[RMDB]
RNA sequence: GGGAACGACUCGAGUAGAGUCGAAAAGACACACCGGGCCGGGGCGCCGAGGAUAGCUACCGCCCGCAGGGAUAGUAAAUAUCCGUGACCAGUGGCCUCGGUGGCUGCGUCUCCCGGAGCAAUGGGACGCAGCACGACAAUUCGUUGUCGUGCUGCGAAAAGAAACAACAACAACAAC
Reactivity to DMS in 0.01 (KOAc 150mM, MgCl2 10mM, bicine 150mM(pH8.5), 24C), signal-to-noise 2, nucleotides 027 to 126: g010a100c140a190c030a030c010c000g010g010g000c100c020g080g020g000g010c040g000c010c100g010a030g010g000a100u020a050g030c070u010a030c090c050g020c060c040c110g040c150a060g010g000g030a040u000a060g000u020a100a150a140u000a010u010c000c000g010u040g040a080c070c070a010g000u040g020g010c000c000u000c020g010g020u000g000g020c050u000g020c030g010u000c080u000c020c000c010g000g000a190g010c140a170a070u040g010g020g020a280
Reactivity to 2A3 in 0.01 (KOAc 150mM, MgCl2 10mM, bicine 150mM(pH8.5), 24C), signal-to-noise 3, nucleotides 027 to 126: g000a010c020a010c000a000c070c000g020g000g010c000c010g050g000g020g000c000g000c000c030g020a030g020g000a080u090a090g030c020u080a090c000c060g070c020c000c000g010c010a050g020g070g000a020u000a010g150u110a030a180a160u060a000u040c010c010g110u030g020a140c020c020a030g030u070g160g030c000c010u050c010g000g010u010g020g020c010u090g020c010g040u000c060u010c020c040c010g010g000a090g000c070a030a130u130g000g010g020a000
Notes: Chemical mapping of a 177-nucleotide RNA with DMS and 2A3. Source: RMDB library RFM100, as collected in RNAgym.